[RMDB]
RNA sequence: GGGAACGACUCGAGUAGAGUCGAAAAUUAGGAGUAUUGGGGAAGUCUUCAGAACCUUUGACGCCUACGUCCUCGCAACGCCCCACAACGUGAGGAUGAGCGACCACCUCGGCGUCAUCUUCGCUAAGAUUACUCAGUCAUUCGUGACUGAGUAAUCAAAAGAAACAACAACAACAAC
Reactivity to DMS in 0.01 (KOAc 150mM, MgCl2 10mM, bicine 150mM(pH8.5), 24C), signal-to-noise 5, nucleotides 027 to 126: u000u010a070g000g000a080g010u010a060u000u010g000g000g000g010a100a140g010u000c110u020u010c080a110g000a230a190c050c040u000u000u000g010a050c050g010c020c020u010a050c180g000u000c010c030u000c040g000c020a100a120c120g000c030c010c010c030a060c190a080a070c190g000u000g000a020g000g010a010u000g010a090g020c050g000a160c050c070a080c200c150u020c140g010g010c010g010u000c010a000u000c030u000u000c020g010c040u000a090a140
Reactivity to 2A3 in 0.01 (KOAc 150mM, MgCl2 10mM, bicine 150mM(pH8.5), 24C), signal-to-noise 4, nucleotides 027 to 126: u090u030a040g000g010a030g030u070a060u120u140g020g000g010g030a080a020g040u030c040u100u050c110a070g020a150a090c010c000u040u030u050g070a020c010g020c010c010u020a050c040g040u010c000c000u000c020g010c010a030a080c060g090c010c000c020c010a050c020a050a090c060g010u010g000a010g000g000a000u000g020a030g070c030g060a170c010c010a090c020c070u110c100g000g000c000g050u000c010a010u000c020u060u030c020g010c080u100a100a020